[RMDB]
RNA sequence: GGGAACGACUCGAGUAGAGUCGAAAACCGCCGCAAAUCCGUGACCUGCUCAAAGCGUUCAAGAGGCUCAUCGAGGAGCUGGAGGCGGAGGGGUACACGGUAGACCCCGAGGUCAAGAGGUGGGUUGAUGCCGUGUGUCAUUCGUGACACACGGCAUAAAAGAAACAACAACAACAAC
Reactivity to 2A3 in 0.01 (KOAc 150mM, MgCl2 10mM, bicine 150mM(pH8.5), 24C), signal-to-noise 1, nucleotides 027 to 126: c000c000g000c010c000g120c060a050a040a000u020c000c000g010u000g000a040c000c000u200g250c000u300c000a210a200a070g120c120g060u070u060c030a060a000g120a080g300g040c020u020c010a120u250c070g300a300g060g000a010g060c030u060g060g000a010g130g000c010g000g040a020g000g000g020g010u000a100c010a000c000g000g020u030a040g000a000c000c040c020c060g180a230g070g000u040c060a030a010g100a000g070g040u110g020g040g000u040u080g030
Reactivity to DMS in 0.01 (KOAc 150mM, MgCl2 10mM, bicine 150mM(pH8.5), 24C), signal-to-noise 1, nucleotides 027 to 126: c030c030g040c060c000g020c110a130a300a100u010c010c000g000u000g000a060c000c000u000g000c020u000c010a060a060a080g000c020g010u000u000c070a110a100g010a180g010g020c000u010c000a130u020c240g020a170g010g000a060g010c010u000g020g000a170g000g000c010g030g050a040g010g000g000g010u000a060c020a010c050g000g070u000a090g000a030c000c000c060c150g000a190g000g060u000c150a060a140g000a070g000g030u000g060g000g020u000u000g000